Background: The record gives the reactivity of an RNA of 207 nucleotides to 2A3 and DMS. For DMS the reverse transcriptase was MarathonRT. It was measured as part of the RMDB library OK3TST.
RNA sequence: GGGAACGACUCGAGUAGAGUCGAAAAGACGUCACCUAAUAGGGUAUUUAUCGGCAAUAAAUCAACAUGGAGAAAGUCGAACGAGUGAAAGCCGGCAUUAUGCGCUACGAUCAGCUUUUCCAUACCAAGCGCCCAAAAGCGCACACGGUUAAACCAAGUAGACAACAAGAUUCGUCUUGUUGUCUACAAAAGAAACAACAACAACAAC
Reactivity to 2A3 in 0.01 (KOAc 150mM, MgCl2 10mM, bicine 150mM(pH8.5), 24C), signal-to-noise 5, nucleotides 027 to 156: g030a020c030g020u040c030a040c030c010u070a110a100u080a170g040g010g010u060a090u020u130u040a080u040c010g020g000c020a050a070u080a170a110a040u120c050a040a130c050a100u120g030g020a040g040a040a050a010g050u060c030g020a040a030c040g010a030g030u050g020a100a020a010g010c010c010g020g000c020a020u070u090a040u170g030c030g000c030u040a040c030g070a090u050c030a040g010c010u030u020u020u020c050c010a020u030a070c010c020a050a030g000c010g020c020c020c000a060a100a010a010g000c010g020c010a000c000a000c050g030g040u020u070a020a010a020c030c030a100a040
Reactivity to DMS in 0.01 (KOAc 150mM, MgCl2 10mM, bicine 150mM(pH8.5), 24C), signal-to-noise 2, nucleotides 027 to 156: g000a120c010g000u000c070a080c040c050u000a110a150u000a070g000g000g030u010a040u000u000u000a030u000c030g020g050c050a240a180u000a050a070a120u010c050a070a070c030a100u010g000g020a090g040a130a050a130g010u010c010g050a040a100c010g010a160g010u000g020a060a050a120g030c020c040g030g040c060a070u010u000a060u010g020c060g030c030u000a130c040g000a090u000c050a200g000c010u000u000u000u010c030c040a090u000a060c060c050a040a060g000c010g000c010c040c000a070a000a090a170g000c030g040c000a120c100a050c060g020g010u000u000a040a050a120c010c000a000a300